The data come from the RNA Mapping Database (RMDB), library OK3TST. An RNA of 207 nucleotides, treated with 2A3 and read out base by base. 2A3 adducts were read by reverse transcription with SuperScript II with manganese. Conditions: 150 mM KOAc, 10 mM MgCl2 and 150 mM bicine (pH 8.5), 24 C.
RNA sequence: GGGAACGACUCGAGUAGAGUCGAAAAACAAGGCGUAUACAACACGCCAUGGUGAUUAUCAAUCACAGGAAGGUGCAAUAUGCUUUGGAUUGUCAGACUCCUUAGUCUGCCACGAGACAAUGUCGAUUUACACACCAGCUGCAUUCGUCUGGAUAACUCAGCUGCGUUAUUUCGAUAACGCAGCUGAAAAAGAAACAACAACAACAAC
Reactivity to 2A3 in 0.01 (KOAc 150mM, MgCl2 10mM, bicine 150mM(pH8.5), 24C), signal-to-noise 1, nucleotides 027 to 156: a000c000a000a000g010g000c050g000u000a050u020a060c070a110a000c040a020c050g040c000c000a020u030g000g000u000g000a040u060u090a170u270c250a080a000u000c000a000c000a000g080g000a000a150g120g010u000g000c030a060a000u030a000u150g000c000u090u000u110g110g140a210u000u150g060u070c070a020g000a000c040u050c020c040u060u150a000g050u000c050u100g070c080c020a000c030g060a000g000a000c040a040a010u160g090u070c060g040a080u140u060u200a040c080a000c010a060c000c030a080g050c090u090g030c010a130u000u040c020g020u000c000u090g000g260a190u200a100a050c030